[RMDB]
RNA sequence: GGGAACGACUCGAGUAGAGUCGAAAAUGACGUUAAACUGCUGACUCAUACAUACUGACACCGGUUGCUCAACAGGCUGUGUGGGACAAUAGAUUAACAAGGCUGUCAAUUUGAGCUUGACGGCUGCAAAACCUGCAGUACUUCGGUACUGCAGGAAGUUAGGCUUAGCGUUCGCGCUAAGCCUAACAAAAGAAACAACAACAACAAC
Reactivity to 2A3 in 0.01 (KOAc 150mM, MgCl2 10mM, bicine 150mM(pH8.5), 24C), signal-to-noise 3, nucleotides 027 to 156: u100g070a020c070g000u010u030a010a060a040c010u050g000c010u020g050a090c000u020c020a000u020a060c010a010u150a100c040u110g050a030c020a070c100c040g120g000u130u170g020c010u010c050a020a050c010a040g020g030c030u010g010u000g000u000g010g010g010a000c000a010a060u020a050g070a060u010u030a020a030c010a040a070g030g000c020u010g000u000c000a000a000u060u070u120g040a010g040c010u000u000g020a000c000g010g040c030u020g010c020a030a080a070a160c020c000u000g000c000a000g000u010a000c000u020u030c100g110g010u000a000c000u000g010c000a000g000g000a000a000

This 207-nucleotide RNA was probed chemically with 2A3. The 2A3 profile rests on 1,873 reads. Source: RMDB library M2RFPK, as collected in RNAgym. For 2A3 the reverse transcriptase was SuperScript II with manganese.